[RMDB]
This 177-nucleotide RNA was probed chemically with DMS and 2A3. Conditions: 150 mM KOAc, 10 mM MgCl2 and 150 mM bicine (pH 8.5), 24 C. For DMS, 3,878 sequencing reads were counted. Reactivities are given for positions 27 through 126. High DMS reactivity at an A or C suggests that its Watson-Crick edge is free. It was measured as part of the RMDB library OK1LIB.

RNA sequence: GGGAACGACUCGAGUAGAGUCGAAAAUAUGGGUUGCUGAGGAGGUCGCGUGGGCGACUAUGGUCCGUUUGGAUUCGAUCCCGACGAAUUCGAUCGGGUGAUCCGGGAGGGGAGCGAGGGACUGCGCUGGUUUCAGUAUGUUCGCAUACUGAAACCAAAAAGAAACAACAACAACAAC
Reactivity to DMS in 0.01 (KOAc 150mM, MgCl2 10mM, bicine 150mM(pH8.5), 24C), signal-to-noise 2, nucleotides 027 to 126: u000a150u040g040g000g010u000u020g020c050u010g000a050g010g050a150g010g000u000c020g030c080g000u030g020g000g000c010g010a000c010u010a070u020g010g000u000c000c010g020u010u000u070g000g000a020u000u020c060g010a110u020c000c010c000g030a300c020g000a120a040u020u030c020g040a130u000c000g000g010g050u020g000a060u010c040c030g000g000g000a120g000g000g000g010a090g010c040g000a120g000g000g000a030c090u010g000c060g010c120
Reactivity to 2A3 in 0.01 (KOAc 150mM, MgCl2 10mM, bicine 150mM(pH8.5), 24C), signal-to-noise 2, nucleotides 027 to 126: u190a030u190g080g020g000u070u020g090c000u010g030a010g040g050a000g060g010u020c000g000c000g150u210g040g140g000c000g020a000c040u040a120u200g040g000u020c000c000g000u020u070u040g030g000a000u050u050c000g050a050u080c010c030c000g000a030c020g020a020a070u150u200c010g060a070u010c010g020g010g000u020g050a060u000c000c000g000g000g020a180g030g000g000g010a030g050c040g000a020g000g000g000a000c090u050g060c050g000c050